[RMDB]
This 177-nucleotide RNA was probed chemically with 2A3 and DMS. Reactivities are rounded to 0.1 and cut off at 0 and 3. The reactions ran in a buffer of 150 mM KOAc, 10 mM MgCl2 and 150 mM bicine (pH 8.5), at 24 C.
RNA sequence: GGGAACGACUCGAGUAGAGUCGAAAAAUCGUGCUUUCCCGCGUACACGACGACGGCGUCGAGUGAUGGCUGUGCCUGCACGUGCGCGGAGGGCGGCCAUGGCGAUGCGUGUCUGCCCGUCGCUGUAGGGAUAAUCAGGGUUCGCCCUGAUUAUCCCAAAAGAAACAACAACAACAAC
Reactivity to 2A3 in 0.01 (KOAc 150mM, MgCl2 10mM, bicine 150mM(pH8.5), 24C), signal-to-noise 2, nucleotides 027 to 126: a000u020c010g040u030g000c010u000u060u020c010c020c010g000c000g000u040a020c020a000c050g050a010c000g030a000c050g110g100c030g020u030c020g050a070g090u250g120a050u030g090g000c000u010g040u140g170c000c000u090g040c040a020c060g040u040g030c100g000c020g030g010a040g000g020g000c000g000g010c000c000a010u040g060g000c040g080a060u160g030c050g010u030g050u060c040u100g020c000c010c000g000u000c000g000c050u020g030u040a070
Reactivity to DMS in 0.01 (KOAc 150mM, MgCl2 10mM, bicine 150mM(pH8.5), 24C), signal-to-noise 2, nucleotides 027 to 126: a090u000c070g060u000g010c090u010u010u000c030c020c000g030c210g050u000a060c010a070c030g010a150c030g020a130c090g000g010c030g010u000c010g010a140g040u010g000a030u010g030g000c010u010g000u000g050c060c010u020g020c040a100c090g000u000g010c090g010c020g000g010a060g000g010g010c000g000g000c070c010a010u020g000g020c010g000a060u010g010c040g000u000g020u000c040u000g010c030c040c010g010u000c010g010c120u010g000u000a090